Chemical mapping of a 177-nucleotide RNA with 2A3. It was measured as part of the RMDB library OK1LIB.
[RMDB]
RNA sequence: GGGAACGACUCGAGUAGAGUCGAAAAAUAAAGCCGAAUCAUCCGGUAAAACUGCUGGCACUAAUGAGAAUUCUGCUUAUACGCUUACCGUUAGUCUUGCUGGUUUGGCUCAAGCUCUUAGGCUUGAGGCUGCGCACAACUUCGGUUGUGCGCAGCCAAAAGAAACAACAACAACAAC
Reactivity to 2A3 in 0.01 (KOAc 150mM, MgCl2 10mM, bicine 150mM(pH8.5), 24C), signal-to-noise 2, nucleotides 027 to 126: a000u150a000a090a060g000c020c000g000a000a110u030c060a010u000c000c000g000g000u000a000a040a040a000c060u070g000c000u000g030g000c030a000c060u050a020a020u110g080a060g100a240a130u120u060c010u090g020c020u150u150a020u120a150c120g000c030u000u020a060c050c010g040u030u010a000g000u030c090u130u070g040c080u060g000g080u010u100u050g010g000c000u000c010a000a000g020c000u000c060u300u230a130g010g000c000u000u030g000a000
The reactions ran in a buffer of 150 mM KOAc, 10 mM MgCl2 and 150 mM bicine (pH 8.5), at 24 C.